The record gives the reactivity of an RNA of 177 nucleotides to 2A3. The 2A3 profile rests on 310 reads.
[RMDB]
RNA sequence: GGGAACGACUCGAGUAGAGUCGAAAACGUCACGUGAGGACUGUGAAGCACAAUGCGAUAUGUUCUGAUUAUAUGGCGAGUUUGCUUAAUGACAUGUUUUUAGCCGAACGGUGUCAAGUUUCUUAAUGGCACCUAAACAAUUCGUUGUUUAGGUGCCAAAAGAAACAACAACAACAAC
Reactivity to 2A3 in 0.01 (KOAc 150mM, MgCl2 10mM, bicine 150mM(pH8.5), 24C), signal-to-noise 1, nucleotides 027 to 126: c030g110u020c100a000c140g140u080g140a000g000g000a000c030u000g000u000g120a250a070g000c000a000c260a300a000u170g020c000g010a000u020a000u020g000u000u070c140u070g000a000u000u150a140u140a200u030g070g050c130g200a090g000u140u000u000g140c090u030u120a040a020u240g000a000c070a070u150g090u010u000u000u000u000a000g050c000c000g000a100a000c040g010g000u000g000u000c020a020a000g000u000u000u000c000u130u130a260a260u000